[RMDB]
RNA sequence: GGGAACGACUCGAGUAGAGUCGAAAAGGCAGGAAUAGAAUGGGCCGAAUCUAGUGUGACACUGCAGGCCAAAAGCUAUUUUUGUUUGGCACAAGGCCUGGUGGCUGAAACGGCGGUGUUCACCAAGCAAUAUUAAAUUAUUCGUAAUUUAAUAUUGAAAAGAAACAACAACAACAAC
Reactivity to 2A3 in 0.01 (KOAc 150mM, MgCl2 10mM, bicine 150mM(pH8.5), 24C), signal-to-noise 6, nucleotides 027 to 126: g040g000c020a010g060g080a060a060u100a100g080a070a070u110g040g030g000c000c000g010a020a020u040c040u020a050g030u030g020u020g120a010c000a000c020u030g000c000a010g000g030c000c000a010a070a040a000g030c020u040a170u080u060u030u060u140g160u070u070u060g020g000c020a030c020a080a030g020g010c010c010u050g090g040u140g030g000c010u050g020a070a030a030c040g040g000c010g000g010u010g020u070u060c010a010c010c000a010a000g030
Reactivity to DMS in 0.01 (KOAc 150mM, MgCl2 10mM, bicine 150mM(pH8.5), 24C), signal-to-noise 9, nucleotides 027 to 126: g000g020c010a060g000g010a090a070u020a060g000a130a120u030g010g000g010c010c010g000a080a110u020c060u020a060g010u020g010u010g000a050c020a010c010u000g000c020a060g010g010c000c000a010a030a070a100g010c130u010a020u020u030u020u030u040g010u010u010u000g000g010c000a190c140a140a210g000g010c000c000u010g010g010u030g010g000c010u010g000a040a060a120c100g010g010c000g000g010u000g000u030u010c010a020c010c050a110a080g000
An RNA of 177 nucleotides, treated with 2A3 and DMS and read out base by base. The 2A3 profile rests on 7,190 reads. For DMS, 45,015 sequencing reads were counted.